Structure probing data (DMS) for a 177-nucleotide construct.
RNA sequence: GGGAACGACUCGAGUAGAGUCGAAAAUCUUCGUACUUCGGUACGAAGAAAAGGCCAACCCACUGGCGGAGGUGAAAGCCAGCGUGGAGGGCACCAACGCGAAAACGGGGGGCUUCGGCCCCCCGAACAGUACCUAGUGGUUCGCCACUAGGUACUGAAAAGAAACAACAACAACAAC
Reactivity to DMS in 0.01 (KOAc 150mM, MgCl2 10mM, bicine 150mM(pH8.5), 24C), signal-to-noise 1, nucleotides 027 to 126: u010c000u010u000c000g050u000a000c000u000u040c190g060g000u000a010c000g050a050a030g020a020a020a110a120g000g050c020c030a040a060c050c000c000a190c090u000g000g000c000g000g000a250g050g030u010g000a040a110a190g010c000c010a060g020c030g020u000g060g010a060g030g020g000c010a070c020c020a080a100c210g000c190g010a030a050a080a140c050g020g040g010g020g000g020c000u000u000c270g000g000c020c000c020c000c010c000g000a000a020

Values cover nucleotides 27 to 126.